[RMDB]
RNA sequence: GGGAACGACUCGAGUAGAGUCGAAAACCGUAGGCGUAUGAACUACGUCGUACAAGAGCGCCGGUGAAAUACGCAUCUUCGAAAGAGGAUGCGGAGCUCUUUAACGACGCAUACGCCUAAACGGAAAGAGUAUUGACGGUUCGCCGUCAAUACUCAAUCUAAUCUCUAUGUUCGCAUAGAGAUUAGAAAAAGAAACAACAACAACAAC
Reactivity to DMS in 0.01 (KOAc 150mM, MgCl2 10mM, bicine 150mM(pH8.5), 24C), signal-to-noise 2, nucleotides 027 to 156: c020c000g020u000a030g010g020c020g070u000a040u000g020a120a280c040u000a130c010g000u000c010g030u030a090c270a050a050g020a010g040c010g010c110c050g000g000u020g010a090a130a180u010a080c100g000c000a010u000c000u010u010c000g010a190a150a300g000a020g000g000a040u010g010c000g020g010a040g020c010u000c000u000u000u000a290a080c010g010a020c000g000c010a050u000a030c030g000c010c000u000a010a000a060c030g000g010a120a120a120g000a030g030u000a010u000u010g010a010c000g010g010u000u010c300g010c000c000g000u000c000a010a000u000a000c000u000c000a020a070
Reactivity to 2A3 in 0.01 (KOAc 150mM, MgCl2 10mM, bicine 150mM(pH8.5), 24C), signal-to-noise 7, nucleotides 027 to 156: c010c000g000u010a010g000g000c000g000u000a000u030g040a140a060c100u140a070c270g000u000c000g000u010a010c090a020a000g000a000g000c060g050c130c180g280g130u300g160a120a130a030u300a050c010g000c000a000u010c000u000u000c010g070a110a060a050g010a010g000g010a000u000g010c000g000g000a010g000c000u000c010u000u000u020a130a040c000g000a000c000g000c030a000u000a000c000g000c000c000u000a010a010a000c020g020g030a090a100a120g000a010g010u000a000u000u000g000a000c000g020g060u070u120c280g050c080c000g000u000c000a000a000u000a000c000u010c000a000a000
Conditions: 150 mM KOAc, 10 mM MgCl2 and 150 mM bicine (pH 8.5), 24 C.
Chemical mapping of a 207-nucleotide RNA with DMS and 2A3.
The DMS profile rests on 6,277 reads.
For DMS the reverse transcriptase was MarathonRT.
2A3 adducts were read by reverse transcription with SuperScript II with manganese.